[RMDB]
RNA sequence: GGGAACGACUCGAGUAGAGUCGAAAAACCUUAUUUUGAGAAGAUGAGGGAUUUGGCCCAUAGAAGCUUCAGCAACCGACUUUAAAUAGCACGGUGCUAAUACCAACGAGCAACUCGAAUGAUAAGUAAAACGUUGACAAGUUCGCUUGUCAACGAAGUUAAAUCAGUUGUUCGCAACUGAUUUAACAAAAGAAACAACAACAACAAC
Reactivity to DMS in 0.01 (KOAc 150mM, MgCl2 10mM, bicine 150mM(pH8.5), 24C), signal-to-noise 1, nucleotides 027 to 156: a100c010c000u000u000a050u000u000u000u000g020a190g010a190a170g020a020u000g000a090g000g030g000a250u010u000u000g030g000c000c000c010a100u000a090g010a090a090g000c040u000u000c040a060g020c010a040a020c010c000g020a130c010u000u000u010a090a090a100u000a010g040c000a070c010g020g030u000g000c000u000a070a070u000a080c030c020a100a140c140g000a050g000c050a120a130c030u010c040g010a090a090u020g020a080u000a030a140g020u000a050a100a130a140c030g010u000u000g000a020c000a010a020g020u000u010c300g020c000u010u000g010u000c000a000a020c010g000a000a050
Reactivity to 2A3 in 0.01 (KOAc 150mM, MgCl2 10mM, bicine 150mM(pH8.5), 24C), signal-to-noise 4, nucleotides 027 to 156: a010c030c000u040u020a080u020u080u050u090g150a070g020a140a030g000a020u030g010a040g000g020g010a000u030u050u150g050g000c010c000c010a030u100a090g140a100a030g010c040u100u080c100a010g000c010a020a010c000c000g040a000c010u050u090u140a130a190a290u160a130g000c010a010c030g000g000u000g020c000u010a010a020u050a060c040c030a020a030c070g020a020g030c040a060a100c020u000c070g100a130a090u100g100a060u030a150a000g010u090a000a140a030a050c010g000u000u010g000a000c000a000a010g010u030u050c140g040c140u010u000g000u000c010a000a000c000g000a010a000
An RNA of 207 nucleotides, treated with DMS and 2A3 and read out base by base. 2A3 adducts were read by reverse transcription with SuperScript II with manganese. DMS adducts were read by reverse transcription with MarathonRT. The DMS profile rests on 2,489 reads. It was measured as part of the RMDB library M2RFPK. For 2A3, 2,576 sequencing reads were counted.